[RMDB]
RNA sequence: GGGAACGACUCGAGUAGAGUCGAAAAGGCAGCCAGUGCCAUUGUCAGUACCAACGAAGGAAUCGACAGCAUAAUGUCCAUGAUGCGCAUGAUGAUGGCGUCUGCGCGUCCACCAAGCACACCGGAAACUGGGGCUAUGGUUCGCCAUAGCCCCAGUAAAAGAAACAACAACAACAAC
Reactivity to DMS in 0.01 (KOAc 150mM, MgCl2 10mM, bicine 150mM(pH8.5), 24C), signal-to-noise 1, nucleotides 027 to 126: g000g000c050a080g040c010c010a090g010u010g010c010c000a100u040u000g070u000c050a010g000u000a100c120c130a080a110c240g000a080a190g000g020a180a080u000c120g000a070c030a020g020c170a090u000a100a100u040g040u000c010c020a060u000g010a060u000g030c040g000c150a000u000g020a000u000g000a060u000g000g040c000g030u000c000u000g020c050g040c000g000u030c020c150a160c030c050a090a140g060c190a020c050a060c010c000g000g010a110a130
Structure probing data (DMS) for a 177-nucleotide construct. Source: RMDB library OK2TST, as collected in RNAgym. Reactivities are given for positions 27 through 126. Values are in units of 0.01, from 0 to 300, in steps of 10.